Description
Source: RMDB library TTRDEL, as collected in RNAgym. This 177-nucleotide RNA was probed chemically with DMS.

RNA sequence: GGGAACGACUCGAGUAGAGUCGAAAAGAUAUGGAGCGCCUGUGAGCGACGAUCUCGGAAACGAGGGAGCUCCUAGGGCGCUCCUAAGUCAAACUAAGUACAGCCUCUUCGGAGGCUGUACUUAGAAGAACAAGAGUUACUUCGGUAACUCUUGUUCAAAAGAAACAACAACAACAAC
Reactivity to DMS in 0.01 (KOAc 150mM, MgCl2 10mM, bicine 150mM(pH8.5), 24C), signal-to-noise 1, nucleotides 027 to 126: g010a020u010a300u010g000g000a000g000c030g030c000c000u010g010u010g020a010g020c020g050a020c210g000a030u000c010u000c010g000g000a160a140a130c010g010a030g000g000g000a060g020c010u010c010c160u000a160g030g010g010c030g010c000u000c000c000u000a000a050g010u000c040a160a100a300c010u000a010a010g000u000a000c000a000g000c000c010u000c010u000u000c210g030g000a010g000g000c010u000g000u000a000c000u000u000a000g010a040a100

DMS adducts were read by reverse transcription with MarathonRT. In probing experiments dimethyl sulfate is read out at A N1 and C N3, which are open when not base-paired.